[RMDB]
RNA sequence: GGGAACGACUCGAGUAGAGUCGAAAAUGAUCGAGAGAUCUAAGUAUGUACGCGAGUCAAGUGCACAGACUCGAGCGAAAGCUCGGUCGAAAGACCGCGUACAUGAGACGGCAAGUGUACAGUCGAAACGGAGCAUAGUAUUCGUACUAUGCUCCGUAAAAGAAACAACAACAACAAC
Reactivity to 2A3 in 0.01 (KOAc 150mM, MgCl2 10mM, bicine 150mM(pH8.5), 24C), signal-to-noise 2, nucleotides 027 to 126: u100g000a000u020c010g010a010g000a000g010a090u000c000u010a070a020g170u100a100u050g010u000a000c000g010c010g010a010g000u020c010a150a120g020u000g020c020a010c000a020g020a010c010u020c050g000a010g000c010g050a120a020a010g000c000u010c000g000g000u000c000g000a040a000a000g010a000c000c000g000c000g000u000a000c000a000u010g000a010g020a010c000g010g000c030a140a170g020u000g010u020a030c020a000g010u020c020g010a040a080
Reactivity to DMS in 0.01 (KOAc 150mM, MgCl2 10mM, bicine 150mM(pH8.5), 24C), signal-to-noise 5, nucleotides 027 to 126: u010g020a020u000c000g010a260g000a210g010a010u000c000u000a110a150g010u010a030u000g000u010a010c020g020c000g010a040g000u000c000a040a080g030u000g000c020a010c030a300g000a000c000u000c010g010a000g030c010g000a140a090a170g020c000u000c000g010g000u000c000g000a080a070a150g000a010c000c000g010c000g010u000a010c000a010u000g000a130g000a090c040g010g000c020a060a060g020u000g010u010a030c020a300g000u010c000g000a080a140

The record gives the reactivity of an RNA of 177 nucleotides to 2A3 and DMS. For 2A3 the reverse transcriptase was SuperScript II with manganese. Conditions: 150 mM KOAc, 10 mM MgCl2 and 150 mM bicine (pH 8.5), 24 C.